[RMDB]
RNA sequence: GGGAACGACUCGAGUAGAGUCGAAAAGUUCCGACCGAAACAUGUCGAAGCAUGACCUCUGCCGAGGUAGUCUGUGGGGUAGAGCGACGGAUUGGGGGACCGCACUCCGAGAGGAGUGCGCCCCCCUUACAAUGAGGAGGUUCGCCUCCUCAUUGUAAAAAGAAACAACAACAACAAC
Reactivity to DMS in 0.01 (KOAc 150mM, MgCl2 10mM, bicine 150mM(pH8.5), 24C), signal-to-noise 5, nucleotides 027 to 126: g010u000u000c000c000g010a100c060c040g010a130a090a120c070a040u010g000u010c060g000a170a110g000c020a050u030g000a150c050c000u000c010u010g010c110c040g010a090g010g000u010a040g000u010c070u010g000u000g010g000g000g010u010a040g000a090g000c050g010a120c050g020g020a130u030u010g000g020g010g000g000a020c300c040g000c000a000c000u010c000c010g000a180g000a240g000g010a010g030u000g020c040g020c020c010c000c000c000c000u000
Reactivity to 2A3 in 0.01 (KOAc 150mM, MgCl2 10mM, bicine 150mM(pH8.5), 24C), signal-to-noise 4, nucleotides 027 to 126: g010u020u020c020c000g030a040c020c010g080a080a100a040c040a050u120g000u070c090g080a060a000g040c020a050u070g060a070c030c020u050c020u050g050c040c040g060a060g030g100u070a040g060u030c060u070g130u110g030g070g000g000u040a040g020a010g050c040g060a030c030g030g030a050u110u140g010g000g000g000g000a010c010c030g010c000a000c010u000c000c000g050a060g010a020g030g000a010g000u000g000c000g000c000c000c000c000c000c000u000
The data come from the RNA Mapping Database (RMDB), libraries RFM100 and RFMREP.
The record gives the reactivity of an RNA of 177 nucleotides to DMS and 2A3.
DMS adducts were read by reverse transcription with MarathonRT.
The reactions ran in a buffer of 150 mM KOAc, 10 mM MgCl2 and 150 mM bicine (pH 8.5), at 24 C.
Reactivities are given for positions 27 through 126.